RNA sequence: GGGAACGACUCGAGUAGAGUCGAAAAGAUAUGGAUAAGUGGGAGCUCGCCCUAGCGACGAAGUCACUUCGUCGGAAACGACGAAGUGACAGAGCUAGGGCGAGCGAAGAACACUUAUCCUAAGUCAGGUUACUAUAGUGUUCGCACUAUAGUAACCAAAAGAAACAACAACAACAAC
Reactivity to DMS in 0.01 (KOAc 150mM, MgCl2 10mM, bicine 150mM(pH8.5), 24C), signal-to-noise 1, nucleotides 027 to 126: g000a070u010a300u000g000g010a030u000a010a000g000u000g000g010g000a180g030c000u000c000g020c010c000c010u000a000g040c000g000a240c250g010a080a080g000u000c010a010c030u010u000c000g010u010c010g000g000a080a070a190c000g030a010c010g010a000a000g090u030g050a020c000a000g000a110g060c000u000a000g000g010g040c040g010a000g000c000g000a040a070g010a140a200c000a000c000u000u000a000u000c010c000u000a020a110g020u000c040a090
Structure probing data (DMS) for a 177-nucleotide construct. In probing experiments dimethyl sulfate is read out at A N1 and C N3, which are open when not base-paired. Values cover nucleotides 27 to 126. The reactions ran in a buffer of 150 mM KOAc, 10 mM MgCl2 and 150 mM bicine (pH 8.5), at 24 C. For DMS the reverse transcriptase was MarathonRT.